This 207-nucleotide RNA was probed chemically with 2A3. Reactivities are rounded to 0.1 and cut off at 0 and 3. For 2A3 the reverse transcriptase was SuperScript II with manganese. Conditions: 150 mM KOAc, 10 mM MgCl2 and 150 mM bicine (pH 8.5), 24 C.

[RMDB]
RNA sequence: GGGAACGACUCGAGUAGAGUCGAAAAGGACUGCGCAGUCCGGCAACAUCAGCAGAGAGCCCGCUAUACGUGACGGAUUGGCUGAAGCGUACAGAAAUAUUGAGCCUCUUGCAAGAGGCAGCCAAGCAAAACGUACGUGAGUUCGCUCACGUACGAAGAGUUGCUAUCGGUUCGCCGAUAGCAACUCAAAAGAAACAACAACAACAAC
Reactivity to 2A3 in 0.01 (KOAc 150mM, MgCl2 10mM, bicine 150mM(pH8.5), 24C), signal-to-noise 1, nucleotides 027 to 156: g030g000a050c060u080g000c190g000c130a020g020u000c000c000g050g000c000a040a050c000a140u100c040a020g030c040a030g020a000g040a000g130c020c030c030g020c040u040a040u040a120c050g010u060g110a000c010g030g010a060u150u030g000g070c010u040g020a040a000g020c060g000u040a000c030a040g120a100a110a000u300a110u110u100g040a080g000c020c020u000c000u020u160g150c180a140a000g000a000g000g000c000a010g020c020c000a080a020g030c050a030a000a000a080c030g000u000a000c000g000u000g000a000g000u000u170c150g020c060u000c000a010c000g000u000a000c000g000a000a000